[RMDB]
RNA sequence: GGGAACGACUCGAGUAGAGUCGAAAAUUAUUAUUGCUUUCCUGCUUGCCACUGUAGCAGGAGGGCCAGAGGCAGGACUAAGAGCAAAUCUUCCUCUCAGAUUAGGAGGGCUGUCCUGAGAUGGGGCAUUGAGUGUUGAAUUCGUUCAACACUCAAUAAAAGAAACAACAACAACAAC
Reactivity to 2A3 in 0.01 (KOAc 150mM, MgCl2 10mM, bicine 150mM(pH8.5), 24C), signal-to-noise 9, nucleotides 027 to 126: u100u050a070u130u050a090u080u160g000c000u010u010u000c000c000u000g000c010u030u070g060c030c030a210c080u150g050u120a010g000c010a010g000g000a000g010g010g000c000c010a060g030a080g090g020c010a000g010g030a020c030u110a130a030g020a010g080c050a040a060a200u030c020u060u040c010c000u010c020u030c060a060g130a300u120u200a050g030g030a010g010g030g000c040u050g010u020c000c000u020g010a030g010a040u100g010g000g020g000c020
Reactivity to DMS in 0.01 (KOAc 150mM, MgCl2 10mM, bicine 150mM(pH8.5), 24C), signal-to-noise 8, nucleotides 027 to 126: u030u030a070u020u020a080u020u020g010c010u000u020u000c000c010u000g000c010u000u010g030c080c080a070c140u010g010u010a040g010c010a020g000g010a020g000g010g010c010c260a040g010a080g010g010c030a020g000g000a050c100u010a080a090g010a070g010c140a060a070a100u030c020u010u010c020c000u000c030u010c110a080g010a160u020u010a070g010g000a030g010g010g010c110u020g010u000c010c000u000g000a060g000a100u010g000g000g000g010c190